Source: RMDB library M2RFPK, as collected in RNAgym. The record gives the reactivity of an RNA of 207 nucleotides to 2A3. The RNA was probed in 150 mM KOAc, 10 mM MgCl2 and 150 mM bicine (pH 8.5) at 24 C.
RNA sequence: GGGAACGACUCGAGUAGAGUCGAAAAAAUCGUCGACGCAUCGACGACGUUCCUGCCAUGAGACCGUAACGAGGACAUGUCGCCUCGAAUGGCGUCGGGGAGCCGGCAGCUUACCCCAAGGAUGAGCAAAAGAAUGAAACGUUCGCGUUUCAUUCAACCUACCGGGAUAGUUCGCUAUCCCGGUAGGAAAAGAAACAACAACAACAAC
Reactivity to 2A3 in 0.01 (KOAc 150mM, MgCl2 10mM, bicine 150mM(pH8.5), 24C), signal-to-noise 1, nucleotides 027 to 156: a000a000u150c070g040u000c000g000a050c090g040c070a160u050c000g000a010c030g000a000c000g010u020u020c000c000u000g000c010c000a090u090g070a090g070a130c030c100g020u070a000a110c040g010a000g000g010a070c070a140u210g040u070c170g000c030c010u030c000g060a100a030u030g000g010c010g010u020c050g000g000g000g000a030g000c030c000g220g140c050a050g020c010u030u130a110c010c000c000c010a020a010g140g010a040u160g020a060g050c040a000a050a120a090g010a010a000u010g000a000a000a000c000g010u040u040c200g020c030g090u000u030u010c000a000u000u000c000a000a000